RNA sequence: GGGAACGACUCGAGUAGAGUCGAAAACAAUCUGAAGUCUCGGUUACGCACUAAUUGUCCUACUCAAAUUAUAGCGACUCAGAAACAAGUGGUCAAGGCAUUCUUUCAGCGUAAUGGUAAUGUACCAGUGGUAUAGUAUCUUCGGAUACUAUACCACAAAAGAAACAACAACAACAAC
Reactivity to 2A3 in 0.01 (KOAc 150mM, MgCl2 10mM, bicine 150mM(pH8.5), 24C), signal-to-noise 5, nucleotides 027 to 126: c010a000a050u030c040u100g070a110a020g040u020c010u030c040g000g050u070u050a040c050g030c020a020c060u100a100a090u090u090g020u050c010c020u060a100c020u030c100a100a110a130u220u110a110u140a100g050c040g030a020c000u020c070a020g080a060a140a020c040a100a020g060u060g060g030u040c020a030a050g050g000c010a020u050u020c020u050u110u060c040a040g010c010g070u050a060a050u050g020g030u050a160a090u120g030u100a030c010c020a040
Reactivity to DMS in 0.01 (KOAc 150mM, MgCl2 10mM, bicine 150mM(pH8.5), 24C), signal-to-noise 6, nucleotides 027 to 126: c070a110a130u000c060u000g010a070a110g000u000c030u000c050g010g000u010u000a070c070g010c040a130c130u000a040a050u010u010g010u010c060c010u020a070c080u000c100a090a070a100u000u010a080u010a120g020c090g010a060c030u000c070a040g000a090a090a070c090a080a070g020u000g010g010u000c050a060a060g010g010c060a050u000u000c060u000u000u010c090a070g000c070g000u000a030a060u010g000g010u000a060a070u010g020u010a080c040c030a120
Source: RMDB library OK2TRN, as collected in RNAgym. An RNA of 177 nucleotides, treated with 2A3 and DMS and read out base by base. For DMS, 6,143 sequencing reads were counted. The RNA was probed in 150 mM KOAc, 10 mM MgCl2 and 150 mM bicine (pH 8.5) at 24 C. 2A3 adducts were read by reverse transcription with SuperScript II with manganese. Reactivities are given for positions 27 through 126.